[RMDB]
RNA sequence: GGGAACGACUCGAGUAGAGUCGAAAACAUUGAUUCCACCGGCUAUUUCGCUUCAGCAUGUUUGGGAUCUCAUGAAUAUCUUACUUGCUGACAGUGUUUGGUUAGCGCAAGUUUAUCGGUGGUUAUGCCAAGAAGUUAUGUUCGCAUAACUUCUUGGAAAAGAAACAACAACAACAAC
Reactivity to 2A3 in 0.01 (KOAc 150mM, MgCl2 10mM, bicine 150mM(pH8.5), 24C), signal-to-noise 8, nucleotides 027 to 126: c020a070u090u240g060a060u180u080c010c000a000c000c010g030g010c020u030a040u050u090u050c010g000c010u000u010c010a010g000c010a000u010g050u050u050u050g030g020g000a030u020c050u060c100a170u230g200a300a040u100a020u060c010u010u010a020c000u000u020g010c000u000g010a020c070a080g010u020g070u050u050u070g060g010u040u060a030g010c040g000c080a070a070g020u060u120u090a200u140c010g010g000u000g010g030u000u040a080u100g040
Reactivity to DMS in 0.01 (KOAc 150mM, MgCl2 10mM, bicine 150mM(pH8.5), 24C), signal-to-noise 7, nucleotides 027 to 126: c060a100u010u010g000a170u010u010c000c000a020c020c010g020g000c030u000a010u010u000u000c010g010c000u000u000c010a010g000c000a010u000g000u010u010u000g010g010g000a110u000c050u000c220a150u010g000a110a060u010a180u010c000u010u000a020c010u000u000g010c000u000g010a020c230a020g020u000g010u000u000u000g000g010u000u000a040g020c020g010c240a070a080g000u000u000u000a070u010c020g010g020u010g010g000u000u010a060u010g010